[RMDB]
RNA sequence: GGGAACGACUCGAGUAGAGUCGAAAAGGCCCUUUCCGCAGAGGGCUGGAUAAUUGCCUCUCCUUUCUAAAAGGAGCCGUUUUCUGGGCCGGGAGCGGUGGCCCUCGCCCAUAGGCUCACGCUCGUACACUCAACAUUACUUCGGUAAUGUUGAGUGAAAAGAAACAACAACAACAAC
Reactivity to DMS in 0.01 (KOAc 150mM, MgCl2 10mM, bicine 150mM(pH8.5), 24C), signal-to-noise 3, nucleotides 027 to 126: g010g010c010c010c040u000u000u010c040c120g000c110a160g010a070g010g010g000c020u000g000g000a180u000a050a100u000u010g000c030c030u000c010u000c010c000u000u000u000c130u020a070a080a060a070g000g010a010g010c130c050g000u010u000u000u010c100u000g000g010g020c060c140g030g000g010a070g010c020g020g030u010g010g010c040c010c010u010c120g000c010c010c020a070u000a080g000g010c020u000c060a080c090g020c060u000c050g010u000a210
Reactivity to 2A3 in 0.01 (KOAc 150mM, MgCl2 10mM, bicine 150mM(pH8.5), 24C), signal-to-noise 3, nucleotides 027 to 126: g020g000c000c000c020u000u040u010c100c010g080c090a040g010a030g050g010g010c030u020g020g000a030u080a240a100u130u150g050c010c000u020c020u060c010c010u080u120u080c160u220a130a160a030a060g050g000a010g010c020c010g050u090u070u010u000c070u060g020g040g080c040c030g040g020g010a030g010c020g000g100u070g090g010c000c030c020u000c030g020c000c020c010a050u070a090g030g000c000u020c030a040c030g020c010u040c030g020u050a040